[RMDB]
Chemical mapping of a 177-nucleotide RNA with DMS and 2A3. The 2A3 profile rests on 2,802 reads. The RNA was probed in 150 mM KOAc, 10 mM MgCl2 and 150 mM bicine (pH 8.5) at 24 C. In probing experiments dimethyl sulfate is read out at A N1 and C N3, which are open when not base-paired. Reactivities are rounded to 0.1 and cut off at 0 and 3. It was measured as part of the RMDB library TTRDEL. The DMS profile rests on 2,014 reads.

RNA sequence: GGGAACGACUCGAGUAGAGUCGAAAAGAUAUGGAAAGGAGCGACGAUCUACUGUGUCGGAAACGACAUGUAGGGAGCUCCAUUCCUAAGUCAAAGCUCUGUUGCACCUUCGGGUGCAACAGAGCAAGUAUGCACAAAUCUUCGGAUUUGUGCAUACAAAAGAAACAACAACAACAAC
Reactivity to DMS in 0.01 (KOAc 150mM, MgCl2 10mM, bicine 150mM(pH8.5), 24C), signal-to-noise 2, nucleotides 027 to 126: g010a030u000a300u000g000g000a000a030a100g010g000a020g020c000g010a060c270g000a020u020c010u000a000c030u030g080u010g000u010c010g020g010a090a060a240c000g010a010c000a000u000g000u010a020g000g000g000a030g010c000u000c000c000a030u000u000c010c000u010a030a130g010u020c040a060a110a110g010c000u000c000u000g000u000u000g020c010a010c000c010u010u000c190g020g020g000u000g010c000a000a000c000a000g000a010g030c010a000a030
Reactivity to 2A3 in 0.01 (KOAc 150mM, MgCl2 10mM, bicine 150mM(pH8.5), 24C), signal-to-noise 2, nucleotides 027 to 126: g010a020u060a020u120g010g010a040a060a030g000g020a000g000c000g300a300c020g000a030u000c000u000a030c090u150g040u000g010u080c010g040g000a060a040a010c000g010a000c000a000u040g000u000a010g000g020g000a000g000c000u070c000c000a010u000u010c000c000u000a160a020g020u030c070a150a090a000g000c010u000c000u030g000u020u000g000c000a010c040c000u070u120c300g090g000g000u000g000c030a010a000c000a030g010a000g000c000a000a000